[RMDB]
RNA sequence: GGGAACGACUCGAGUAGAGUCGAAAAGGGAUGGGAUCCGAAGCCCCAUUGAGGGAUAAUACAGGCUCUCCCAUCCAAAUCCUAUUCCAACACGUCCUCGUCGUACAGAGUGGUAACAUGUGUCACCUAUACUAAUGACCGUUCGCGGUCAUUAGAACUUUCAAAAAAACUUCGGUUUUUUUGAAAGAAAAGAAACAACAACAACAAC
Reactivity to DMS in 0.01 (KOAc 150mM, MgCl2 10mM, bicine 150mM(pH8.5), 24C), signal-to-noise 1, nucleotides 027 to 156: g040g030g020a050u000g010g000g030a070u000c020c020g020a210a270g050c010c000c010c000a300u000u010g010a230g010g000g010a080u000a060a160u000a150c070a230g020g000c040u000c040u010c020c000c010a030u000c010c040a040a040a050u010c000c000u000a160u010u000c050c020a080a030c060a100c040g020u030c030c020u010c060g040u010c070g020u000a110c090a100g010a080g020u000g040g020u000a050a050c080a060u020g010u010g000u000c000a090c040c000u000a150u000a090c000u000a000a000u010g000a020c000c010g000u000u010c300g040c000g000g040u010c000a000u010u000a010g010a110a150
Reactivity to 2A3 in 0.01 (KOAc 150mM, MgCl2 10mM, bicine 150mM(pH8.5), 24C), signal-to-noise 3, nucleotides 027 to 156: g070g000g000a010u010g000g010g020a090u250c000c020g030a030a050g030c020c020c030c050a160u190u260g030a300g010g020g010a040u110a210a050u130a260c170a060g000g000c010u010c000u000c000c000c000a000u000c000c000a010a010a000u000c000c000u040a070u060u120c080c020a070a000c010a010c070g060u050c000c000u040c030g090u030c000g040u120a100c040a070g060a010g070u120g040g000u090a090a040c040a120u130g030u010g030u080c030a090c040c040u090a080u090a300c000u000a060a000u000g000a000c010c010g010u010u030c200g010c010g070g000u000c000a000u000u000a000g000a000a010